[RMDB]
RNA sequence: GGGAACGACUCGAGUAGAGUCGAAAAGCAGUAAUUCGUUACUGCAAAAAGCGUACUACUUAGGGAGCAUCGAUCAUAUGGUGAACUAUAUCCCAAAUAGGAUAUAGACCAUAUGGGAGCUCAUUAAGUAUCGCAAAAAGCGCGGUUCGCCGCGCAAACCAAACCAUGGUUUCGACCAUGGUUUGGUAAAAGAAACAACAACAACAAC
Reactivity to 2A3 in 0.01 (KOAc 150mM, MgCl2 10mM, bicine 150mM(pH8.5), 24C), signal-to-noise 1, nucleotides 027 to 156: g010c000a000g040u010a010a030u130u140c190g020u110u050a000c000u020g000c000a150a000a000a000a000g060c070g020u120a170c040u010a020c030u060u010a010g000g030g000a000g000c060a280u230c030g120a120u060c020a000u010a000u000g000g000u020g050a070a010c000u010a010u000a000u000c070c030c070a240a250a240u300a090g000g030a000u010a000u000a000g130a110c000c000a000u000a000u000g000g050g000a030g020c000u000c000a000u000u020a000a000g010u000a000u300c010g010c000a000a000a000a190a000g010c020g000c000g020g000u010u130c250g030c090c000g000c010g000c000a010a010
The record gives the reactivity of an RNA of 207 nucleotides to 2A3. The data come from the RNA Mapping Database (RMDB), library RNAMAK. The RNA was probed in 150 mM KOAc, 10 mM MgCl2 and 150 mM bicine (pH 8.5) at 24 C. Reactivities are given for positions 27 through 156.